[RMDB]
RNA sequence: GGGAACGACUCGAGUAGAGUCGAAAACGUGAAAUCAGGAACUCUAUUUGGCGGGAGAGGUCUGCGAAUCGCACCUACGUUAUCGUCAACGAUUUGCAUCUUAUAGAGGCGAGAUUUAUACCUGCAGCGACUGGGCACUUUUCGAAGUGCCCAGUCGAAAAGAAACAACAACAACAAC
Reactivity to 2A3 in 0.01 (KOAc 150mM, MgCl2 10mM, bicine 150mM(pH8.5), 24C), signal-to-noise 1, nucleotides 027 to 126: c000g110u140g130a000a030a060u060c000a000g060g040a060a020c000u040c000u030a080u050u070u000g000g000c000g000g000g000a040g000a000g090g000u050c070u040g040c030g010a000a080u120c000g010c010a030c090c030u000a160c000g140u040u150a180u230c000g070u000c000a020a020c020g000a000u010u000u200g090c000a010u010c000u020u150a080u030a020g000a000g010g030c080g040a030g000a090u000u090u140a060u150a050c000c020u000g030c000a050g020